Description
This 207-nucleotide RNA was probed chemically with 2A3. The reactions ran in a buffer of 150 mM KOAc, 10 mM MgCl2 and 150 mM bicine (pH 8.5), at 24 C. It was measured as part of the RMDB library M2RFPK.
RNA sequence: GGGAACGACUCGAGUAGAGUCGAAAAUGACGUUAAACUGCUGACUCAUACAUACUGACACCGGUUGCUCAACAGGUUGUGUGGGACAAUAGAAUAACAAGGCUGUCAAUUUGAGCUUGACGGCUGCAAAACCUGCAGUACUUCGGUACUGCAGGAACCACAUCCGGAUGUUCGCAUCCGGAUGUGGAAAAGAAACAACAACAACAAC
Reactivity to 2A3 in 0.01 (KOAc 150mM, MgCl2 10mM, bicine 150mM(pH8.5), 24C), signal-to-noise 1, nucleotides 027 to 156: u110g020a010c100g000u030u040a070a080a030c000u060g030c030u050g010a010c000u000c010a010u000a050c000a040u220a080c030u080g110a080c010a030c100c040g080g010u070u140g030c030u020c020a020a100c020a030g040g020u010u010g000u020g000u000g000g000g000a000c000a010a030u010a120g050a040a000u060a040a030c010a080a070g020g000c000u000g000u000c000a010a010u000u000u180g010a000g000c030u010u010g000a000c000g020g000c020u010g000c040a000a000a040a220c000c000u000g000c010a000g000u010a000c000u000u050c130g180g000u000a000c000u020g000c000a000g000g010a000a000